[RMDB]
RNA sequence: GGGAACGACUCGAGUAGAGUCGAAAAGAUAUGGACGUGGCAGGCUUUUGACGCGUUAUCGGAAACGAUAGAGCGAUAAGCCUGCACGUCCUAAGUCAAAAGAGCAUGCACUUCGGUGCAUGCUCAAGAACUGUUCUUUGUUCGCAAAGAACAGUUCAAAAGAAACAACAACAACAAC
Reactivity to DMS in 0.01 (KOAc 150mM, MgCl2 10mM, bicine 150mM(pH8.5), 24C), signal-to-noise 3, nucleotides 027 to 126: g000a010u010a240u010g000g010a010c000g010u000g000g020c000a000g000g000c000u020u000u000u010g010a150c030g020c000g000u000u000a010u000c010g010g000a070a050a080c010g010a010u010a010g010a070g000c000g000a170u010a030a060g010c000c000u000g000c000a000c000g000u000c000c000u000a000a060g000u000c020a090a090a130a130g000a020g020c000a010u000g000c000a010c000u000u010c200g020g020u000g000c020a000u010g000c000u000c000a010a050
Reactivity to 2A3 in 0.01 (KOAc 150mM, MgCl2 10mM, bicine 150mM(pH8.5), 24C), signal-to-noise 3, nucleotides 027 to 126: g010a000u020a010u060g010g010a000c020g010u070g300g300c010a010g030g000c060u120u240u290u300g120a060c000g010c000g040u060u000a000u000c010g000g000a000a020a000c010g000a010u010a000g040a010g020c000g060a090u090a300a040g000c000c000u010g010c000a000c000g000u000c000c000u000a010a000g000u010c010a040a070a070a090g000a000g010c020a000u000g010c000a020c040u100u160c300g070g010u000g010c000a000u000g000c000u000c000a010a000

The data come from the RNA Mapping Database (RMDB), library TTRDEL. An RNA of 177 nucleotides, treated with DMS and 2A3 and read out base by base. The DMS profile rests on 4,901 reads. Reactivities are given for positions 27 through 126. Values are in units of 0.01, from 0 to 300, in steps of 10. Conditions: 150 mM KOAc, 10 mM MgCl2 and 150 mM bicine (pH 8.5), 24 C.